Source: RMDB library OK3TST, as collected in RNAgym.
Structure probing data (2A3 and DMS) for a 207-nucleotide construct.
For DMS the reverse transcriptase was MarathonRT.

RNA sequence: GGGAACGACUCGAGUAGAGUCGAAAAUCUUCCUAGUUUGGGGGAAAGAACAUUGUUAGAAAAAAGAGGCGGUUUUCAGGAAGCAGAGGACUUGACUUCAUUGACAGGAGGGCGGUCUGUAACCCACAGGCUGUCCUGCCAGGGCUGCUGCUGCAGCAUACAUUGCCUCAUUCGUGAGGCAAUGUAUAAAAGAAACAACAACAACAAC
Reactivity to 2A3 in 0.01 (KOAc 150mM, MgCl2 10mM, bicine 150mM(pH8.5), 24C), signal-to-noise 4, nucleotides 027 to 156: u030c010u040u000c010c010u010a060g070u060u150u130g040g000g010g000g000a040a060a040g030a080a030c030a100u060u180g050u130u170a100g070a030a120a010a040a050a020g050a030g020g030c040g010g050u050u030u070u110c040a010g020g000a010a000g000c040a030g040a040g050g020a020c020u040u120g040a040c010u060u020c140a110u020u130g030a050c030a040g010g010a000g010g010g000c000g000g000u000c000u000g020u050a110a130c040c040c020a000c000a000g000g000c000u000g010u010c000c000u010g030c000c000a020g000g070g000c000u010g010c000u060g050c060u140g000c000a000g010c000
Reactivity to DMS in 0.01 (KOAc 150mM, MgCl2 10mM, bicine 150mM(pH8.5), 24C), signal-to-noise 3, nucleotides 027 to 156: u000c100u000u000c000c000u000a110g020u000u000u040g010g020g020g040g010a060a100a120g000a090a110c070a090u000u020g020u000u000a140g040a010a070a110a060a080a080g010a120g010g010c040g030g010u000u010u000u000c060a090g000g000a090a090g010c080a080g000a080g010g010a080c060u000u010g020a040c070u010u000c080a140u000u000g010a080c050a040g000g000a150g030g030g000c000g030g030u010c010u000g010u000a090a190c130c080c100a300c000a030g000g000c020u000g010u000c000c010u000g020c030c020a060g030g010g020c010u010g010c010u000g020c020u000g010c010a080g050c170
In probing experiments dimethyl sulfate is read out at A N1 and C N3, which are open when not base-paired. High 2A3 reactivity points to a flexible backbone, as in loops and unpaired stretches. The DMS profile rests on 6,076 reads. Conditions: 150 mM KOAc, 10 mM MgCl2 and 150 mM bicine (pH 8.5), 24 C.